[RMDB]
RNA sequence: GGGAACGACUCGAGUAGAGUCGAAAAGCCGUGCUCGAGAGGGAGCAGAAAAUGCAGAGCUAUCCCGUCGUUUCGCUAAACUAAUGCGAAACGACAAAUUGCGUUACAUACGCAAUCCUCUAAUGAAUUUCUGUUCACAGUUCGCUGUGAACAGAAAAAAAGAAACAACAACAACAAC
Reactivity to 2A3 in 0.01 (KOAc 150mM, MgCl2 10mM, bicine 150mM(pH8.5), 24C), signal-to-noise 2, nucleotides 027 to 126: g020c010c010g080u030g020c000u010c020g120a080g000a000g040g040g000a010g030c030a030g110a010a140a020a010u210g030c040a040g030a030g080c000u020a080u070c010c000c040g010u010c000g000u000u000u000c010g000c030u060a020a150a190c070u060a190a000u090g000c000g000a000a000a000c000g030a010c000a000a090a020u000u010g000c010g000u030u070a180c120a130u210a010c040g000c000a000a020u010c000c010u050c010u040a080a110u130g110a080a140
Reactivity to DMS in 0.01 (KOAc 150mM, MgCl2 10mM, bicine 150mM(pH8.5), 24C), signal-to-noise 2, nucleotides 027 to 126: g030c030c080g000u010g000c010u010c030g000a040g000a060g000g020g000a020g010c010a090g020a050a080a090a040u010g010c110a130g000a150g040c050u000a130u000c020c000c030g010u000c000g010u000u000u000c000g040c000u000a060a160a210c300u010a030a080u000g010c020g000a000a010a000c000g000a000c000a040a020a050u010u000g000c000g000u000u000a080c250a180u000a020c000g000c000a020a010u020c000c010u000c000u000a080a200u000g000a120a100
This 177-nucleotide RNA was probed chemically with 2A3 and DMS. Reactivities are rounded to 0.1 and cut off at 0 and 3. Conditions: 150 mM KOAc, 10 mM MgCl2 and 150 mM bicine (pH 8.5), 24 C. The DMS profile rests on 1,133 reads. For 2A3, 1,629 sequencing reads were counted. It was measured as part of the RMDB library M2PK90. DMS adducts were read by reverse transcription with MarathonRT.